RNA sequence: GGGAACGACUCGAGUAGAGUCGAAAAGCUGAGAGUCUCGUAGUGAUUGGUGCUCAUUUUUUUCUAGAUGGCAGAAGAACAGACGCAAUGGUCAAUUGAUACGCAACUACAACAUAACGAUCUUGAAAUCCUUCUCGAGGGUGUCAGUGAUAUUGAGCUAAGGCAAGAAUUUCGAUUCUUGCCUUAGAAAAGAAACAACAACAACAAC
Reactivity to 2A3 in 0.01 (KOAc 150mM, MgCl2 10mM, bicine 150mM(pH8.5), 24C), signal-to-noise 5, nucleotides 027 to 156: g050c040u050g020a020g010a020g130u010c020u020c060g070u070a020g030u010g090a100u050u070g060g000u050g000c020u020c080a070u110u050u020u000u010u060u020c070u090a100g000a090u060g050g010c060a030g010a100a010g010a050a010c030a040g070a040c030g000c110a040a050u070g010g010u030c010a050a050u050u090g030a040u070a100c040g010c070a070a020c030u150a050c030a150a010c020a060u160a110a040c040g080a070u000c000u010u020g010a050a050a020u040c010c010u060u080c060u050c070g010a040g020g020g000u020g040u030c020a010g020u010g090a030u050a060u160u110g010a020g020
Reactivity to DMS in 0.01 (KOAc 150mM, MgCl2 10mM, bicine 150mM(pH8.5), 24C), signal-to-noise 4, nucleotides 027 to 156: g000c050u000g010a160g010a130g010u010c030u010c010g010u020a110g020u010g000a100u000u010g000g020u000g010c040u010c060a030u000u000u000u000u000u000u000c050u000a100g000a120u000g000g030c050a060g020a070a070g000a050a070c060a100g000a070c060g020c030a080a080u000g010g000u010c040a070a110u000u010g020a110u000a040c110g020c050a040a050c050u000a070c050a050a060c030a090u010a090a110c050g010a050u000c040u000u010g020a060a040a070u000c020c010u000u010c050u000c070g000a090g020g020g030u000g000u000c020a060g010u000g010a110u000a100u010u010g010a180g010
The data come from the RNA Mapping Database (RMDB), library OK3TST. The record gives the reactivity of an RNA of 207 nucleotides to 2A3 and DMS. For 2A3, 3,485 sequencing reads were counted. The RNA was probed in 150 mM KOAc, 10 mM MgCl2 and 150 mM bicine (pH 8.5) at 24 C. For DMS the reverse transcriptase was MarathonRT.